[RMDB]
RNA sequence: GGGAACGACUCGAGUAGAGUCGAAAAUGUGGACUGACUUCCCUGGGAAGUCGGUGAAGAAUUAGAAAGUACACAAUUUGGAGGAAGAGGGGGGAAAGGAGAGAUAAAUAAGACCUUCUGUGGUUCAAGUGAGGCAGCUCCUUCCUGAGGCCCCAAAGCCUAUAAUAGCGUUCGCGCUAUUAUAGGCAAAAGAAACAACAACAACAAC
Reactivity to 2A3 in 0.01 (KOAc 150mM, MgCl2 10mM, bicine 150mM(pH8.5), 24C), signal-to-noise 1, nucleotides 027 to 156: u110g020u040g000g040a000c010u000g000a010c000u020u030c030c030c050u070g040g040g000a030a000g040u010c000g030g010u040g000a030a050g010a020a050u140u090a110g050a060a040a010g070u130a040c050a000c010a050a050u090u050u180g080g020a040g000g030a020a050g010a070g020g000g000g000g000g010a000a020a010g000g010a010g010a000g000a030u100a060a080a000u190a020a010g050a030c000c000u060u030c050u050g050u170g050g150u030u050c030a070a020g030u050g120a010g020g020c010a010g000c000u000c010c000u040u000c010c010u030g030a020g060g000c070c000c000c060a000a100a000
Reactivity to DMS in 0.01 (KOAc 150mM, MgCl2 10mM, bicine 150mM(pH8.5), 24C), signal-to-noise 1, nucleotides 027 to 156: u000g040u000g040g020a070c030u010g000a060c020u000u000c000c000c110u000g000g010g010a010a000g000u000c000g000g000u010g040a070a100g000a150a160u000u000a090g010a140a100a120g020u000a120c070a070c040a000a090u000u010u020g010g010a110g040g000a100a140g030a160g010g010g000g080g080g010a010a020a030g010g010a030g030a210g000a110u000a010a020a150u020a120a140g010a070c020c000u000u010c000u000g020u010g020g010u010u000c070a020a110g020u000g010a050g030g020c040a150g040c110u000c010c010u010u030c020c000u000g010a090g030g000c000c000c020c010a000a050a280
Chemical mapping of a 207-nucleotide RNA with 2A3 and DMS. The data come from the RNA Mapping Database (RMDB), library OK3TST. For DMS, 1,955 sequencing reads were counted. Conditions: 150 mM KOAc, 10 mM MgCl2 and 150 mM bicine (pH 8.5), 24 C.